[RMDB]
Structure probing data (2A3) for a 207-nucleotide construct. The RNA was probed in 150 mM KOAc, 10 mM MgCl2 and 150 mM bicine (pH 8.5) at 24 C.
RNA sequence: GGGAACGACUCGAGUAGAGUCGAAAACGGUACUAUGAAUUGAUGCAAGGUGUGGAGCGACGUUAAACAGUUCUGGUGGUGCUCUGAAUGGAGUGCUCUACUGAGAUUAUAAAAUAGAAGGUAAGCUGAAGGGGAAAUGAGUUCGCUCAUUUCCCAACCAUACCGCUGGGUUCGCCCAGCGGUAUGGAAAAGAAACAACAACAACAAC
Reactivity to 2A3 in 0.01 (KOAc 150mM, MgCl2 10mM, bicine 150mM(pH8.5), 24C), signal-to-noise 2, nucleotides 027 to 156: c000g050g030u050a010c030u080a060u190g000a040a110u110u130g020a040u130g020c000a060a090g040g000u020g000u030g060g020a020g000c020g050a030c030g000u030u070a090a050a050c100a040g000u030u050c020u040g020g030u030g000g000u010g000c000u000c000u090g090a060a050u190g010g010a030g020u040g000c010u000c000u010a020c030u070g030a030g000a070u140u070a050u250a060a060a060a000u110a010g050a070a030g020g000u050a030a080g050c050u100g130a030a090g000g000g000g000a000a000a000u010g010a010g050u030u120c200g010c060u010c010a020u000u000u010c000c000c000a000a000